[RMDB]
RNA sequence: GGGAACGACUCGAGUAGAGUCGAAAAGGCAACCGGCUGGUGCCGAACGUCGCUCGACACGGGGGUGGCCCGGCCACCCUUUGCGCACCUUGGCACCGACCAUGAGACGUCGUGUGUGCCGAACGCCCUAGGUUGUCCAUUUCGAUGGACAACCUAGAAAAGAAACAACAACAACAAC
Reactivity to 2A3 in 0.01 (KOAc 150mM, MgCl2 10mM, bicine 150mM(pH8.5), 24C), signal-to-noise 4, nucleotides 027 to 126: g020g000c010a010a010c000c020g000g010c050u090g000g000u010g000c000c010g000a060a020c040g050u070c050g020c050u070c090g130a090c050a080c200g020g010g000g020g000u020g000g030c110c240c100g020g020c000c010a010c010c010c000u000u050u030g000c000g000c000a000c020c030u040u060g010g000c000a000c000c010g040a060c030c000a130u180g090a030g030a150c050g020u010c010g000u040g010u020g050u060g150c000c000g000a050a020c030g080c010c000
Reactivity to DMS in 0.01 (KOAc 150mM, MgCl2 10mM, bicine 150mM(pH8.5), 24C), signal-to-noise 3, nucleotides 027 to 126: g000g020c000a130a090c040c000g010g040c030u010g000g000u000g030c000c000g000a050a050c300g010u000c080g000c020u000c240g020a150c160a090c250g010g000g000g010g040u000g040g000c000c190c190g000g010c000c000a020c000c000c010u000u000u000g000c070g000c030a080c020c040u000u020g000g000c030a010c000c010g030a070c100c090a080u040g000a130g000a080c080g000u020c010g000u030g000u020g040u000g020c000c000g000a090a190c200g010c000c010